Structure probing data (DMS and 2A3) for a 177-nucleotide construct. Conditions: 150 mM KOAc, 10 mM MgCl2 and 150 mM bicine (pH 8.5), 24 C. 2A3 adducts were read by reverse transcription with SuperScript II with manganese. For 2A3, 2,268 sequencing reads were counted. For DMS the reverse transcriptase was MarathonRT.
RNA sequence: GGGAACGACUCGAGUAGAGUCGAAAAGGAACGUUGUUCGCAACGUUCCGUGCCGGAAACGGACAUGACGAUCGCGCGCAUGUCGGGAAACGGUAAACGCGAGCAUCAUGGUGUUCGCACCAUGAAAAACGGAAUUAUCCUUCGGGAUAAUUCCGUUAAAAGAAACAACAACAACAAC
Reactivity to DMS in 0.01 (KOAc 150mM, MgCl2 10mM, bicine 150mM(pH8.5), 24C), signal-to-noise 2, nucleotides 027 to 126: g020g010a000a010c000g020u000u000g020u000u000c150g020c010a080a000c000g000u000u000c000c000g010u000g010c010c000g010g000a040a080a220c010g010g000a000c000a000u010g010a140c030g010a080u010c110g020c090g030c030g020c010a020u000g010u000c010g000g000g020a120a100a180c020g000g010u010a040a080a080c080g020c030g010a030g030c300a100u000c010a020u000g010g000u000g000u000u000c180g030c000a010c000c010a010u000g010a020a040a060
Reactivity to 2A3 in 0.01 (KOAc 150mM, MgCl2 10mM, bicine 150mM(pH8.5), 24C), signal-to-noise 2, nucleotides 027 to 126: g000g010a000a000c000g000u010u000g030u050u080c170g010c130a000a000c000g020u010u000c000c000g000u030g000c010c010g000g130a160a150a020c070g030g010a010c000a000u040g070a080c020g040a080u090c070g000c010g000c000g000c070a010u030g010u000c000g030g030g010a130a110a010c040g010g060u190a170a130a000c040g000c010g020a010g130c040a070u030c010a000u020g040g000u030g040u060u040c110g000c070a000c000c000a010u030g060a120a010a020